[RMDB]
The data come from the RNA Mapping Database (RMDB), library OK3TST. The record gives the reactivity of an RNA of 207 nucleotides to 2A3. The reactions ran in a buffer of 150 mM KOAc, 10 mM MgCl2 and 150 mM bicine (pH 8.5), at 24 C. 2A3 is a SHAPE reagent: it acylates the 2'-hydroxyl of flexible nucleotides of all four kinds. For 2A3 the reverse transcriptase was SuperScript II with manganese.
RNA sequence: GGGAACGACUCGAGUAGAGUCGAAAAGUCUUCACGCGGAGCCAUCAAGGUAACUGAGCGUCACUAUGCAUCCGAGGAAGAUUGAGUGAGGGAUGGUGGAUGGGAGUGAGUGCCAAUUCGACUGGAUACUCACUCGGACGAAGUGACGUAGAUGGAACGCUGUACCAAGAUUCGUCUUGGUACAGCGAAAAGAAACAACAACAACAAC
Reactivity to 2A3 in 0.01 (KOAc 150mM, MgCl2 10mM, bicine 150mM(pH8.5), 24C), signal-to-noise 1, nucleotides 027 to 156: g010u020c000u060u060c060a080c070g110c020g080g030a040g000c000c000a060u020c040a090a250g180g030u170a150a070c030u100g080a000g040c020g020u010c010a000c000u060a040u260g040c070a070u000c040c000g030a040g030g030a040a070g060a080u120u290g000a020g060u090g010a070g000g000g040a060u090g000g050u030g000g050a080u080g000g000g040a000g070u010g010a000g000u060g000c000c000a080a110u200u090c050g070a100c150u010g040g000a080u070a040c000u000c050a050c000u020c000g030g010a020c030g020a140a000g000u020g030a010c020g010u010a050g000a020u100g030g030a070a100